Conditions: 150 mM KOAc, 10 mM MgCl2 and 150 mM bicine (pH 8.5), 24 C. Structure probing data (DMS) for a 177-nucleotide construct. For DMS, 1,011 sequencing reads were counted.
RNA sequence: GGGAACGACUCGAGUAGAGUCGAAAAUGUAAUGUGGUUGUACACUUAUAGCAUUGGAGAAGCCUCAAGCCCCAUUGCCUAUCUGGUUUUUGUCACUACACUCACUAGUGAUUAUACGAUUACAGUCGCGAAAUACUUAGUUCGCUAAGUAUUUCGCAAAAGAAACAACAACAACAAC
Reactivity to DMS in 0.01 (KOAc 150mM, MgCl2 10mM, bicine 150mM(pH8.5), 24C), signal-to-noise 2, nucleotides 027 to 126: u000g010u010a030a080u000g000u000g000g010u020u000g030u000a090c110a060c010u000u000a010u000a070g010c030a020u000u000g010g000a070g020a140a070g000c050c070u030c230a100a170g000c020c030c010c020a020u000u000g010c120c050u000a020u000c040u010g000g020u020u000u000u000u000g040u010c010a010c030u010a020c130a080c150u000c220a020c110u010a030g040u010g000a010u000u000a100u000a060c070g000a060u010u000a050c070a040g010u000c140
It was measured as part of the RMDB library 15KREP.